This 177-nucleotide RNA was probed chemically with 2A3 and DMS. For DMS the reverse transcriptase was MarathonRT. The RNA was probed in 150 mM KOAc, 10 mM MgCl2 and 150 mM bicine (pH 8.5) at 24 C.
[RMDB]
RNA sequence: GGGAACGACUCGAGUAGAGUCGAAAAUCUACAUAUGUUAACUAAUAAAAAACGGGCUGUACUGUGCAAUUUAAUCCCACUAGAUUUGUAAAACUUAGAGAUAAAAUACUGGAUCUAAGAGAGGAAGGAUUCAGUUUAAAUUCGUUUAAACUGAAUCAAAAGAAACAACAACAACAAC
Reactivity to 2A3 in 0.01 (KOAc 150mM, MgCl2 10mM, bicine 150mM(pH8.5), 24C), signal-to-noise 1, nucleotides 027 to 126: u050c030u040a120c010a100u230a050u120g040u090u040a160a150c060u040a200a080u120a150a230a020a030a010a000c040g020g000g000c040u040g000u070a010c040u000g040u000g020c030a000a020u000u040u170a100a070u000c030c030c000a030c010u070a000g100a300u030u060u150g020u030a080a120a000a000c010u020u070a030g020a000g040a060u130a260a140a120a050u100a190c070u040g110g010a000u000c010u010a010a010g030a000g040a070g170g000a000a060g090
Reactivity to DMS in 0.01 (KOAc 150mM, MgCl2 10mM, bicine 150mM(pH8.5), 24C), signal-to-noise 3, nucleotides 027 to 126: u000c030u000a060c060a120u000a070u000g000u010u000a050a080c060u020a080a110u040a030a070a150a060a070a100c070g000g010g030c060u020g010u000a030c050u000g030u000g030c060a050a070u000u000u020a080a140u000c010c030c010a140c110u010a060g010a090u010u010u000g010u000a050a040a090a110c050u010u020a040g000a060g010a270u000a040a100a080a090u010a070c180u000g020g010a140u000c000u010a030a020g030a200g000a070g000g010a090a090g030